[RMDB]
RNA sequence: GGGAACGACUCGAGUAGAGUCGAAAAGAUAUGGAAUGAGAGCCUUCCGUUACAACUUUUGACGCGAAAGGAGUCGGAAACGACUUACUCGCGAUAAGUUGAACGGAAGGCUCUCAUUCCUAAGUCACACCAAAAUAGUGUUCGCACUAUUUUGGUGAAAAGAAACAACAACAACAAC
Reactivity to DMS in 0.01 (KOAc 150mM, MgCl2 10mM, bicine 150mM(pH8.5), 24C), signal-to-noise 2, nucleotides 027 to 126: g000a050u000a300u010g020g000a030a000u000g010a020g000a010g040c020c000u000u000c000c010g010u010u010a210c010a010a000c000u020u000u000u010g030a210c110g020c010g030a010a080a050g000g000a010g000u000c010g020g000a140a080a290c020g010a030c010u000u000a030c040u000c010g000c030g000a080u000a000a000g030u000u000g010a060a000c000g010g000a030a000g000g000c000u000c000u000c010a020u000u010c010c000u010a020a070g010u000c050a290
The data come from the RNA Mapping Database (RMDB), library TTRINS. The record gives the reactivity of an RNA of 177 nucleotides to DMS. The DMS profile rests on 1,994 reads. Reactivities are given for positions 27 through 126. The RNA was probed in 150 mM KOAc, 10 mM MgCl2 and 150 mM bicine (pH 8.5) at 24 C.